Chemical mapping of a 207-nucleotide RNA with DMS and 2A3. Source: RMDB library OK3TST, as collected in RNAgym. Conditions: 150 mM KOAc, 10 mM MgCl2 and 150 mM bicine (pH 8.5), 24 C.
[RMDB]
RNA sequence: GGGAACGACUCGAGUAGAGUCGAAAAACAUCAAGUACCACUUCGUGCACAGCCUGCCCGUGAACCCGUACGACCCCUACAUGGCCACCGUGUCGGGCCUGCGGCAGUUGUUGUUCAACAAACUCAACAACUUGGACCUGCCCUGCAUCAUGGACAAACGUUUAAUUAAAUUCGUUUAAUUAAACGUAAAAGAAACAACAACAACAAC
Reactivity to DMS in 0.01 (KOAc 150mM, MgCl2 10mM, bicine 150mM(pH8.5), 24C), signal-to-noise 4, nucleotides 027 to 156: a060c050a100u000c060a030a080g040u000a100c040c010a100c090u010u000c070g050u000g010c030a120c060a120g020c030c030u000g000c010c020c010g040u000g000a060a080c060c010c030g020u010a070c030g000a090c030c000c020c030u020a090c070a080u010g010g030c020c020a060c060c040g010u000g020u010c300g020g010g020c010c020u000g020c030g000g020c050a120g010u000u000g030u010u000g010u000u010c050a080a110c120a090a060a070c070u010c020a060a050c010a040a060c040u010u000g010g010a080c020c020u000g020c000c010c010u010g010c030a080u000c070a080u010g020g000a050c000a060a130
Reactivity to 2A3 in 0.01 (KOAc 150mM, MgCl2 10mM, bicine 150mM(pH8.5), 24C), signal-to-noise 8, nucleotides 027 to 156: a000c050a070u130c060a070a030g050u050a070c030c010a030c060u070u060c070g040u050g030c030a030c010a050g040c010c010u030g000c020c020c000g030u020g060a050a060c030c000c010g010u050a040c060g090a120c010c020c000c010u050a070c060a110u120g020g000c050c010a060c020c040g020u020g070u110c010g000g000g000c010c020u030g010c020g030g000c020a030g000u010u020g000u000u010g000u020u060c040a090a090c020a070a110a040c040u050c040a020a040c010a020a020c010u030u080g040g020a060c010c010u030g000c000c000c000u010g000c010a060u070c020a030u120g060g030a040c050a040a140